[RMDB]
RNA sequence: GGGAACGACUCGAGUAGAGUCGAAAAUAGGCAGAUGCCCCGCGCUCAGGCUUUCGAUACGGCAAUCGAGCUCUUGCCGUCAGCUAACCGGCCCACGAGGGGGCGGGAAUCGUUACGAGCUUGCGCACUGAGCGGACUCCCACGGUGCGGGGCUGAAGACCAAAGUAAGGUUCGCCUUACUUUGGUCAAAAGAAACAACAACAACAAC
Reactivity to 2A3 in 0.01 (KOAc 150mM, MgCl2 10mM, bicine 150mM(pH8.5), 24C), signal-to-noise 1, nucleotides 027 to 156: u150a040g050g000c060a050g030a080u110g000c000c000c010c000g020c000g000c000u030c010a040g010g000c010u050u070u060c030g010a030u030a010c020g000g000c000a010a010u120c120g020a070g010c080u040c010u010u000g010c000c010g020u030c070a000g020c020u020a010a040c000c010g290g000c020c010c010a170c100g100a130g020g090g000g030g020c000g000g000g020a040a020u040c010g020u090u120a070c030g010a020g030c010u020u030g000c000g020c030a070c090u120g030a040g040c050g010g010a080c030u020c020c010c010a020c010g010g000u050g020c000g070g000g000g000c000u100g000a000a020
Conditions: 150 mM KOAc, 10 mM MgCl2 and 150 mM bicine (pH 8.5), 24 C. Structure probing data (2A3) for a 207-nucleotide construct. Values cover nucleotides 27 to 156.